[RMDB]
RNA sequence: GGGAACGACUCGAGUAGAGUCGAAAACUCAUGGCGUGCUCUCCUCCUUUUUGCGGCGAUAAUGCCGGCUCGCCUUGGCGCGGUUGCCGCAGACCGCCAUGUCGCACCAGGCCCGGCUCUUGAUAUAAUGCUGGACGGGUUUCGACCCGUCCAGCAUAAAAGAAACAACAACAACAAC
Reactivity to 2A3 in 0.01 (KOAc 150mM, MgCl2 10mM, bicine 150mM(pH8.5), 24C), signal-to-noise 1, nucleotides 027 to 126: c000u000c000a100u090g000g030c000g070u110g060c000u000c000u000c010c000u060c020c040u110u250u090u170u050g000c010g000g080c070g110a170u050a300a120u290g020c030c020g000g000c070u100c100g100c000c040u030u050g070g000c120g010c000g010g150u060u150g030c020c000g040c040a040g010a070c000c000g000c040c000a030u020g000u060c040g010c000a020c020c000a020g010g050c000c010c000g000g010c000u000c040u000u040g000a070u020a050u020a220
Notes:
Chemical mapping of a 177-nucleotide RNA with 2A3. The RNA was probed in 150 mM KOAc, 10 mM MgCl2 and 150 mM bicine (pH 8.5) at 24 C. The data come from the RNA Mapping Database (RMDB), library OK1LIB.